The record gives the reactivity of an RNA of 170 nucleotides to 2A3 and DMS.

RNA sequence: GGGAACGACUCGAGUAGAGUCGAAAAGAACCCGAUGGAGUCCCCCACCAUCCCUUCCGGAUGAAACUGGUCCCGAUAGGGGCACCCACAAUAGGAUGGCAAAAGGGGACCAUCGGGUCCGUCGUUCAGCCACUGGACUUCGGUCCAGUGAAAAGAAACAACAACAACAAC
Reactivity to 2A3 in 0.01 (KOAc 150mM, MgCl2 10mM, bicine 150mM(pH8.5), 24C), signal-to-noise 8, nucleotides 027 to 129: g010a040a010c000c000c000g010a000u010g020g060a150g260u050c030c000c020c000c010a010c000c000a020u050c020c000c000u280u260c030c010g100g030a170u210g030a170a020a020c070u200g100g010u030c000c000c000g090a140u270a300g000g000g000g000c000a010c010c010c000a010c000a000a020u030a050g000g000a000u010g000g010c050a020a010a050a060g000g000g000g000a000c010c000a010u000c000g000g000g000u000c000c000g030u010c000g000u010u030c020a060g090c020
Reactivity to DMS in 0.01 (KOAc 150mM, MgCl2 10mM, bicine 150mM(pH8.5), 24C), signal-to-noise 4, nucleotides 027 to 129: g020a110a040c000c000c000g000a000u030g020g040a160g090u030c000c000c050c000c140a050c000c010a030u000c000c010c080u040u040c090c070g030g050a170u000g030a060a070a110c130u070g060g050u040c040c020c020g030a180u070a160g000g010g000g000c020a090c110c010c040a080c140a090a100u100a010g010g030a010u070g020g000c110a020a020a130a040g020g020g000g020a060c010c020a030u020c010g000g000g000u000c030c040g000u020c030g020u020u010c000a080g060c120

It was measured as part of the RMDB library 15KLIB. Reactivities are given for positions 27 through 129. The reactions ran in a buffer of 150 mM KOAc, 10 mM MgCl2 and 150 mM bicine (pH 8.5), at 24 C. For DMS, 13,267 sequencing reads were counted.